An RNA of 177 nucleotides, treated with 2A3 and read out base by base.
The RNA was probed in 150 mM KOAc, 10 mM MgCl2 and 150 mM bicine (pH 8.5) at 24 C.
The data come from the RNA Mapping Database (RMDB), library RFM100.
Reactivities are rounded to 0.1 and cut off at 0 and 3.
2A3 adducts were read by reverse transcription with SuperScript II with manganese.

RNA sequence: GGGAACGACUCGAGUAGAGUCGAAAAUUGUUUUGAUCAAAAAUAUGUUCAACUCUUUUUCACCGGCUUUCUCUUUUUAUAUUUAAUACAUAUUUGUUCCAAUACUCGGUGCGUCUUCUUAGCCGCCCGAAGGUUCUAAAUUCGUUUAGAACCUUCGAAAAGAAACAACAACAACAAC
Reactivity to 2A3 in 0.01 (KOAc 150mM, MgCl2 10mM, bicine 150mM(pH8.5), 24C), signal-to-noise 2, nucleotides 027 to 126: u060u060g030u000u030u020u020g020a020u050c050a040a120a150a080a060u210a130u300g010u000u030c000a000a020c010u020c000u000u000u020u060u050c100a090c120c000g030g030c020u000u050u000c000u020c000u040u090u000u170u000a120u130a170u170u180u220a260a090u240a170c020a010u270a100u140u150u130g030u060u000c030c000a040a020u030a130c010u020c050g040g010u060g000c020g000u020c020u050u000c000u050u050a000g000c010c020g010c000c010